[RMDB]
Source: RMDB library TTRDEL, as collected in RNAgym.
The record gives the reactivity of an RNA of 177 nucleotides to DMS and 2A3.
DMS adducts were read by reverse transcription with MarathonRT.
The 2A3 profile rests on 4,040 reads.
Reactivities are rounded to 0.1 and cut off at 0 and 3.
Reactivities are given for positions 27 through 126.
The reactions ran in a buffer of 150 mM KOAc, 10 mM MgCl2 and 150 mM bicine (pH 8.5), at 24 C.

RNA sequence: GGGAACGACUCGAGUAGAGUCGAAAAGAUAUGGAUCGGACGGGAGACCCUCGGAAACGAGAGGUCAUCGAUCGUCCCGAUCCUAAGUCAAAACUCUCCGGGACUAGUUCGCUAGUCCCGGAGAGAACCUUAAUUGUAACUUCGGUUACAAUUAAGGAAAAGAAACAACAACAACAAC
Reactivity to DMS in 0.01 (KOAc 150mM, MgCl2 10mM, bicine 150mM(pH8.5), 24C), signal-to-noise 2, nucleotides 027 to 126: g010a020u010a300u000g000g000a000u010c000g010g000a040c000g000g000g030a090g020a010c000c000c000u010c000g000g000a070a070a170c010g010a000g010a150g060g020u000c020a070u010c190g000a150u000c020g000u000c030c020c010g000a000u000c000c000u010a020a050g010u000c030a100a070a080a130c000u000c010u000c000c000g000g010g010a030c000u000a020g020u000u010c240g010c000u000a000g010u000c000c000c000g030g010a000g000a000g000a010a090
Reactivity to 2A3 in 0.01 (KOAc 150mM, MgCl2 10mM, bicine 150mM(pH8.5), 24C), signal-to-noise 2, nucleotides 027 to 126: g030a030u080a020u130g000g010a000u010c010g000g040a010c000g000g010g030a030g010a000c020c010c000u020c000g030g020a120a070a020c030g000a010g060a190g060g040u040c040a040u110c020g020a100u020c000g000u090c000c120c030g000a000u000c000c000u000a100a010g020u020c020a000a030a100a300c000u010c000u000c000c020g010g000g000a000c020u000a000g030u100u150c290g010c210u010a010g000u020c010c000c000g000g000a000g000a010g000a010a000